Structure probing data (2A3 and DMS) for a 177-nucleotide construct. Conditions: 150 mM KOAc, 10 mM MgCl2 and 150 mM bicine (pH 8.5), 24 C. For 2A3 the reverse transcriptase was SuperScript II with manganese.
[RMDB]
RNA sequence: GGGAACGACUCGAGUAGAGUCGAAAAGGGUUAGCGUUCGCGCUAACCCCAGGAUCGAACAUGUCAAAUCUCCCAGACAUGAAACGAUCAAAAGCGAGAAAACUAGACAGUCAUUCGUGACUGUCAAAGAAGGAUUUAAAUUCGUUUAAAUCCUUCUAAAAGAAACAACAACAACAAC
Reactivity to 2A3 in 0.01 (KOAc 150mM, MgCl2 10mM, bicine 150mM(pH8.5), 24C), signal-to-noise 4, nucleotides 027 to 126: g000g000g000u000u010a010g000c020g010u030u050c270g000c000g000c100u000a000a000c000c000c000c020a060g000g150a010u010c000g000a020a030c000a000u010g000u000c010a030a080a250u090c110u040c050c030c010a020g000a010c000a000u000g010a090a050a000c010g000a000u010c000a000a100a060a020g110c090g040a090g220a080a150a050a080c100u100a060g000a010c000a000g000u020c000a010u050u120c210g080u030g000a000c000u000g000u000c000a000a000
Reactivity to DMS in 0.01 (KOAc 150mM, MgCl2 10mM, bicine 150mM(pH8.5), 24C), signal-to-noise 7, nucleotides 027 to 126: g010g010g010u000u000a020g020c000g020u000u010c240g030c020g020c000u010a000a010c000c000c000c090a050g010g000a010u000c000g010a160a300c010a000u010g010u000c000a060a070a110u010c150u000c020c020c030a160g000a010c010a000u000g000a040a080a070c010g010a010u000c010a090a040a100a100g010c150g010a110g000a080a060a090a090c160u010a100g010a010c000a000g000u000c000a040u000u010c160g020u000g000a000c000u000g000u000c000a020a050